[RMDB]
An RNA of 307 nucleotides, treated with DMS and 2A3 and read out base by base. Source: RMDB library POS240, as collected in RNAgym. The reactions ran in a buffer of 150 mM KOAc, 10 mM MgCl2 and 150 mM bicine (pH 8.5), at 24 C. 2A3 adducts were read by reverse transcription with SuperScript II with manganese.
RNA sequence: GGGAACGACUCGAGUAGAGUCGAAAAGGACCUUGCGUGAGCAAGGUCCAAGGCGAUGCUUCGGCAUCGCCAACCGUCACUACGGUGACGGACCAGGUCUUCGGACCUGGAACGUAACGGUGACGUUACGACUCCACGCGUUCGCGCGUGGAGACGAGAAGCUACGGCUUCUCGAAGGAGAGUAGAUGAUUCGCGUUAAGUGUGUGUGAAUGGGAUGUCGUCACACAACGAAGCGAGAGCGCGGUGAAUCAUUGCAUCCGCUCCAUAGAUAGCUCUUCGGAGCUAUCAAAAGAAACAACAACAACAAC
Reactivity to DMS in 0.01 (KOAc 150mM, MgCl2 10mM, bicine 150mM(pH8.5), 24C), signal-to-noise 6, nucleotides 027 to 266: g020g010a010c000c010u000u000g010c000g000u030g010a270g010c010a000a010g010g030u000c000c000a020a030g010g020c000g010a010u000g010c000u000u020c200g020g010c000a000u010c000g000c000c000a010a030c030c010g010u000c000a010c010u000a100c220g040g010u000g010a010c000g000g010a080c010c010a010g010g010u000c000u000u020c220g020g010a010c000c000u000g000g010a130a130c020g010u000a000a000c000g000g000u020g000a160c010g010u000u000a020c030g010a240c000u000c000c000a000c000g020c000g020u010u020c190g020c020g020c000g020u000g000g000a000g000a060c030g010a010g000a030a010g010c000u000a110c190g040g010c010u000u000c010u000c000g010a180a140g000g000a020g000a030g000u010a300g000a020u000g010a020u000u000c000g010c000g010u000u020a040a060g010u000g010u000g010u000g000u000g000a030a060u010g000g000g000a000u000g000u010c200g000u000c010a000c010a010c000a010a050c070g000a070a070g030c010g000a180g000a150g020c000g010c060g000g010u000g000a010a010u000c010a030u000u000g000c000a020u000c010c010g000c000u000c000c010a150u010a140
Reactivity to 2A3 in 0.01 (KOAc 150mM, MgCl2 10mM, bicine 150mM(pH8.5), 24C), signal-to-noise 7, nucleotides 027 to 266: g000g000a000c000c000u000u000g000c020g060u160g080a090g010c000a000a000g000g000u000c000c000a000a000g000g000c010g010a000u010g000c010u050u140c300g080g000c010a000u010c000g000c000c000a000a020c000c000g000u000c000a000c010u070a040c260g140g000u010g000a000c000g000g000a010c000c000a000g000g010u000c010u070u170c240g150g000a010c000c000u000g000g010a020a040c010g000u000a000a000c000g000g100u080g100a030c000g000u000u010a010c010g110a100c000u000c000c000a010c000g020c000g020u060u080c220g030c000g000c000g100u000g000g000a000g000a000c010g000a000g000a000a000g000c010u030a020c300g100g000c000u010u000c000u000c000g010a080a020g000g000a000g000a000g000u010a000g000a010u000g000a000u010u010c010g000c010g010u030u100a020a010g010u020g000u000g010u000g000u000g030a020a010u010g000g000g020a010u020g050u100c110g010u010c040a000c000a000c000a010a020c030g010a020a010g000c030g030a030g020a010g040c000g000c010g010g050u010g000a000a000u010c000a000u010u010g000c000a000u000c000c000g000c000u000c000c010a000u020a040